[RMDB]
RNA sequence: GGGAACGACUCGAGUAGAGUCGAAAAGAAAGAAAGAAAGCAGUGCAGUCAUCCAUAAAGUAGAAAGCACUACUAAACCCCUCGCCACAGUGUAGUGUUUCCUACUUUAUGGAUGAGUGUACUGUAAGAAACCAGUAAGUUUCGACUUACUGGUUUCAAAAGAAACAACAACAACAAC
Reactivity to 2A3 in 0.01 (KOAc 150mM, MgCl2 10mM, bicine 150mM(pH8.5), 24C), signal-to-noise 8, nucleotides 027 to 126: g060a010a070a010g120a030a070a010g100a040a100a010g010c000a000g000u000g000c000a030g210u000c000a000u000c000c000a000u000a000a000a000g000u000a000g010a010a010a000g000c020a000c000u010a000c010u030a070a140a160c010c020c020c020u080c070g080c070c020a130c050a080g070u040g000u100a000g000u000g000u000u000u000c000c000u000a000c000u000u000u000a000u000g000g000a000u000g000a000g000u000g000u000a000c000u000g000u000a000a010
Reactivity to DMS in 0.01 (KOAc 150mM, MgCl2 10mM, bicine 150mM(pH8.5), 24C), signal-to-noise 4, nucleotides 027 to 126: g000a100a090a100g010a090a100a100g010a080a140a170g000c010a000g010u000g020c000a010g000u000c000a010u000c000c010a010u000a000a010a010g000u000a000g000a050a020a020g000c000a000c000u010a020c010u020a050a120a200c080c030c030c030u000c090g010c080c050a070c100a100g000u000g000u000a010g010u000g010u000u000u000c030c000u000a000c000u000u000u000a000u000g000g000a000u000g000a010g000u000g010u000a000c010u000g000u000a030a070

Record summary:
Conditions: 150 mM KOAc, 10 mM MgCl2 and 150 mM bicine (pH 8.5), 24 C. Structure probing data (2A3 and DMS) for a 177-nucleotide construct. DMS adducts were read by reverse transcription with MarathonRT. 2A3 adducts were read by reverse transcription with SuperScript II with manganese.